This 177-nucleotide RNA was probed chemically with 2A3 and DMS. It was measured as part of the RMDB library M2PK50. The RNA was probed in 150 mM KOAc, 10 mM MgCl2 and 150 mM bicine (pH 8.5) at 24 C. For DMS, 3,955 sequencing reads were counted.
RNA sequence: GGGAACGACUCGAGUAGAGUCGAAAAGUGGCAUACUUCGGUAUGCCACAAACCAGACCCUAUCUGGAACACGCUCUACUGCGUGAUCCCAAGUACAUCCCAAAAGUCGUGGGUUCGCCCACGACAACUAUAGGGUCUUGUUCGCAAGACCCUAUAGAAAAGAAACAACAACAACAAC
Reactivity to 2A3 in 0.01 (KOAc 150mM, MgCl2 10mM, bicine 150mM(pH8.5), 24C), signal-to-noise 5, nucleotides 027 to 126: g000u000g010g010c010a010u010a010c020u040u060c220g070g000u000a000u000g010c000c000a000c000a000a000a000c010c000a000g040a010c020c020c030u070a090u100c040u030g000g000a040a030c010a000c030g030c000u100c100u230a170c140u130g030c000g010u010g040a060u030c000c010c000a050a020g050u060a060c030a140u060c020c020c000a030a090a010a070g010u000c000g000u000g020g010g020u020u020c230g070c010c010c000a000c010g000a000c000a000a010
Reactivity to DMS in 0.01 (KOAc 150mM, MgCl2 10mM, bicine 150mM(pH8.5), 24C), signal-to-noise 4, nucleotides 027 to 126: g010u000g000g000c000a020u000a000c010u010u000c240g040g020u010a000u000g020c010c000a000c000a000a070a140c070c030a080g010a080c100c060c080u000a160u010c070u000g000g010a120a140c030a040c050g000c000u000c270u000a080c130u000g010c040g040u000g000a090u000c020c000c070a090a070g010u000a060c180a140u000c010c010c010a110a060a110a090g010u000c010g020u000g000g000g020u000u010c240g020c000c000c000a000c000g000a000c010a030a050